[RMDB]
RNA sequence: GGGAACGACUCGAGUAGAGUCGAAAAAGAAAGCAACGGGGCUAGCCGGUGGGUGUUCCGCCCCCCGAGAGGGGAAGAGUGAGGCUUAUCCCGGGGAACUCGACUUAUCGUCCCCACAUAGCAGUUUACAUCCCCAUGUUCGCAUGGGGAAAAAGAAACAACAACAACAAC
Reactivity to 2A3 in 0.01 (KOAc 150mM, MgCl2 10mM, bicine 150mM(pH8.5), 24C), signal-to-noise 6, nucleotides 027 to 129: a000g060a000a030a000g050c020a010a060c030g000g000g040g000c030u030a020g020c000c010g020g020u020g010g020g030u100g090u180u050c010c000g030c010c000c000c000c000c000g050a070g070a060g070g000g010g020a100a000g060a020g110u210g040a060g030g000c010u030u050a020u060c010c010c000g010g000g000g000a030a010c020u010c030g040a040c030u080u120a050u110c030g000u000c010c000c040c000a020c000a030u130a020g090c080a000g000u030u060u040a070c010a080
Reactivity to DMS in 0.01 (KOAc 150mM, MgCl2 10mM, bicine 150mM(pH8.5), 24C), signal-to-noise 4, nucleotides 027 to 129: a070g040a070a090a060g000c090a110a110c030g000g000g000g000c080u030a090g020c060c050g070g000u010g020g010g010u000g000u040u050c010c000g010c090c000c000c000c040c060g000a100g000a200g020g030g000g020a040a030g020a060g020u000g030a110g000g000c060u020u030a000u030c010c000c000g010g010g010g010a070a060c090u030c050g000a040c060u010u050a050u000c070g020u020c000c000c000c000a100c120a000u000a080g000c070a080g020u010u020u010a070c170a140